[RMDB]
RNA sequence: GGGAACGACUCGAGUAGAGUCGAAAAGCUCGGUGACACCGCGUCUGCCUGGGUCCGAAAGAUUUCUUGUCGCAAAUCUACAAGACAUUGGUUAACGUGUGGGCCGCUUGAGCGGCCGCUCGGCGGGAGAUGCGAUGGUGUUCGCGCCGUUGCAUCUAAAAGAAACAACAACAACAAC
Reactivity to 2A3 in 0.01 (KOAc 150mM, MgCl2 10mM, bicine 150mM(pH8.5), 24C), signal-to-noise 3, nucleotides 027 to 126: g020c010u010c010g030g040u070g030a040c030a010c050c020g010c010g040u020c050u050g040c000c000u030g040g000g050u010c000c020g070a090a070a000g020a010u020u040u010c020u050u120g110u100c080g030c110a020a040a080u030c010u030a030c050a050a030g030a020c020a040u030u070g050g020u090u140a070a020c030g010u030g010u150g080g050g020c010c000g040c020u140u300g020a030g060c000g000g000c010c000g000c000u010c000g050g000c000g000g000g010
Reactivity to DMS in 0.01 (KOAc 150mM, MgCl2 10mM, bicine 150mM(pH8.5), 24C), signal-to-noise 1, nucleotides 027 to 126: g010c020u030c000g020g000u030g020a120c070a100c040c020g000c020g000u000c030u010g040c010c020u000g020g010g020u010c000c040g000a090a120a070g000a040u000u020u010c020u040u020g000u020c180g010c160a030a040a030u000c020u000a040c210a120a050g000a020c060a100u010u000g010g010u000u010a070a160c040g030u020g030u000g040g020g030c000c010g010c020u020u150g020a220g030c000g000g000c040c030g000c040u020c010g020g010c040g000g000g000